RNA sequence: GGGAACGACUCGAGUAGAGUCGAAAACGCCAGUGGCAGGUGCUAGGUACGUUAUGUGCUGGGUCGCAAGCUAUAAGCGCACAUGCGAUGCGCGUCGCUGGUCGGGACAGAAUCCGGCAACCUGGCCUGUACGCAGGCGCUUCGGUGCUUGUGUACAAAAAGAAACAACAACAACAAC
Reactivity to 2A3 in 0.01 (KOAc 150mM, MgCl2 10mM, bicine 150mM(pH8.5), 24C), signal-to-noise 1, nucleotides 027 to 126: c040g090c010c010a030g000u100g040g010c020a000g030g040u020g000c030u120a080g000g050u100a070c070g060u180u210a120u220g080u010g020c020u100g000g000g120u020c000g000c160a060a040g000c020u090a070u110a300a060g000c030g070c020a000c020a030u210g110c110g110a160u010g000c000g010c020g020u030c030g000c010u010g030g000u040c030g010g010g010a010c000a040g120a070a080u130c020c010g000g000c020a180a150c000c000u060g270g000c000c000